[RMDB]
RNA sequence: GGGAACGACUCGAGUAGAGUCGAAAAGACUUUCCUCCCGCGCUCAGUUGUUUCUUCUUGUUCUCGAGGGCCUUCCUUCUUCGGUGAUCCUUCCUCUCCCUGUCGGUGAAGUCUCCCGCACGAGUCCGUAUACGAAGUUUCGACUUCGUAAAAAGAAACAACAACAACAAC
Reactivity to DMS in 0.01 (KOAc 150mM, MgCl2 10mM, bicine 150mM(pH8.5), 24C), signal-to-noise 9, nucleotides 027 to 129: g000a110c070u010u010u010c030c010u020c020c020c010g030c130g000c110u010c080a130g030u010u000g010u030u020u010c000u020u030c080u000u000g020u020u010c010u030c020g020a070g030g000g000c050c010u010u000c030c020u020u020c020u040u000c040g030g020u000g000a070u000c040c030u010u000c030c020u000c010u020c020c010c020u020g030u030c040g000g020u030g000a070a120g010u030c040u000c020c000c000g030c120a060c050g020a080g020u010c020c050g010u000a160
Reactivity to 2A3 in 0.01 (KOAc 150mM, MgCl2 10mM, bicine 150mM(pH8.5), 24C), signal-to-noise 8, nucleotides 027 to 129: g030a000c020u050u060u030c010c010u010c010c010c000g030c000g030c030u090c080a050g000u000u000g000u000u020u000c000u050u020c040u060u110g030u100u020c010u030c030g020a060g010g060g010c010c010u030u030c020c000u040u040c000u040u040c010g050g000u060g040a060u030c000c000u020u040c000c010u010c010u020c000c010c000u030g060u050c020g020g040u050g020a040a000g030u000c010u010c020c010c010g040c010a060c050g020a020g030u040c050c020g050u070a020